[RMDB]
RNA sequence: GGGAACGACUCGAGUAGAGUCGAAAAGUCAUGCCUUCGGGCAUGACAGGUACCGAGAGGUACCAAAUAGCGUACAGCAGACUCCGACUGUACGCUAAGUAAGUGUGUGUUCAAUCGGGUCCAAUUGAACACACACUCCGUUGGACCGAGAGUGUGACCCUCCAUCAUAUUUCGAUAUGAUGGAGGGAAAAGAAACAACAACAACAAC
Reactivity to 2A3 in 0.01 (KOAc 150mM, MgCl2 10mM, bicine 150mM(pH8.5), 24C), signal-to-noise 2, nucleotides 027 to 156: g010u000c000a000u000g000c000c010u030u110c300g050g010g030c010a000u000g000a000c000a000g000g000u000a000c010c020g020a050g010a030g080g000u000a000c010c000a010a020a030u060a000g000c000g010u000a000c010a000g060c030a020g050a170c030u030c070c040g140a160c020u020g000u010a000c000g000c020u020a070a010g150u070a110a020g000u020g000u000g000u000g030u000u020c010a020a000u050c080g100g030g020u060c030c010a000a020u000u010g010a000a000c000a000c000a000c000a000c000u000c000c020g060u070u100g040g040a060c040c030g080a060g000a020g110u040g020u060g040a020
Annotation: An RNA of 207 nucleotides, treated with 2A3 and read out base by base. Conditions: 150 mM KOAc, 10 mM MgCl2 and 150 mM bicine (pH 8.5), 24 C. Values cover nucleotides 27 to 156. The data come from the RNA Mapping Database (RMDB), library OK3TST.